[RMDB]
RNA sequence: GGGAACGACUCGAGUAGAGUCGAAAAGCUGUCGUGUUCGGCGCUCUCAGCGGCUCUCAGAGCGCCGGCGGCGUGGUCGCUUCACGCGUCGGCCGGCGUCCAUGUACGGCUGCAGCAGCUGGUCGAGGCUGACAUCGAUAUUCGUAUCGAUGUCAGCAAAAGAAACAACAACAACAAC
Reactivity to DMS in 0.01 (KOAc 150mM, MgCl2 10mM, bicine 150mM(pH8.5), 24C), signal-to-noise 2, nucleotides 027 to 126: g030c030u010g020u000c050g030u010g010u000u010c040g010g000c020g010c040u000c040u040c060a100g020c050g010g020c030u000c050u000c050a090g020a080g000c000g030c000c000g000g000c000g000g010c000g000u000g000g000u000c150g010c180u000u000c040a040c060g000c020g020u000c000g010g020c020c020g000g000c020g000u010c030c060a130u000g010u000a080c200g010g010c000u000g010c120a140g000c040a050g000c000u000g020g070u010c030g010a110g010
Reactivity to 2A3 in 0.01 (KOAc 150mM, MgCl2 10mM, bicine 150mM(pH8.5), 24C), signal-to-noise 1, nucleotides 027 to 126: g050c040u040g030u120c050g040u010g130u200u070c000g040g000c020g020c000u000c010u000c030a020g000c030g100g000c030u040c020u010c030a020g010a000g030c000g000c020c010g000g010c000g010g020c000g000u000g030g060u110c070g040c130u130u090c030a030c010g020c020g080u050c000g230g100c010c000g000g000c010g030u010c000c010a020u080g030u060a070c080g010g000c000u000g010c000a020g000c010a000g000c010u060g000g090u080c060g020a040g020